[RMDB]
RNA sequence: GGGAACGACUCGAGUAGAGUCGAAAAGGGUGAGGUCCACGCCGCCGUCGCCGUACUUGGUGUAAAAGCCGGUCAGCGCUUCCGCCGCGUGGUCGGUGCCCACCACCAGCAGGUUUUCCUGCCCGGCGUACCUAGCAUUAUUCGUAAUGCUAGGUACAAAAGAAACAACAACAACAAC
Reactivity to 2A3 in 0.01 (KOAc 150mM, MgCl2 10mM, bicine 150mM(pH8.5), 24C), signal-to-noise 7, nucleotides 027 to 126: g030g010g000u040g030a070g070g060u040c010c000a000c010g000c010c010g010c000c010g030u030c010g020c040c000g020u060a030c020u120u300g000g000u040g010u040a040a050a020a010g020c000c000g010g000u010c030a020g010c020g010c130u060u010c010c020g000c000c010g000c010g010u000g000g000u010c020g000g100u100g010c000c000c000a010c010c000a020c000c000a010g000c000a010g020g020u040u110u270u240c000c000u000g010c000c030c030g080g000c050
Reactivity to DMS in 0.01 (KOAc 150mM, MgCl2 10mM, bicine 150mM(pH8.5), 24C), signal-to-noise 8, nucleotides 027 to 126: g000g010g010u000g000a140g010g010u010c020c020a040c040g020c000c190g010c020c140g010u000c030g010c010c010g020u020a020c030u010u010g080g000u000g000u000a080a090a150a200g010c000c010g000g010u000c010a050g000c020g000c210u000u010c140c150g020c040c200g010c020g010u000g000g010u000c020g000g000u010g000c020c010c010a170c080c030a100c030c030a160g000c030a030g000g000u000u000u010u000c010c010u000g000c000c040c060g000g010c200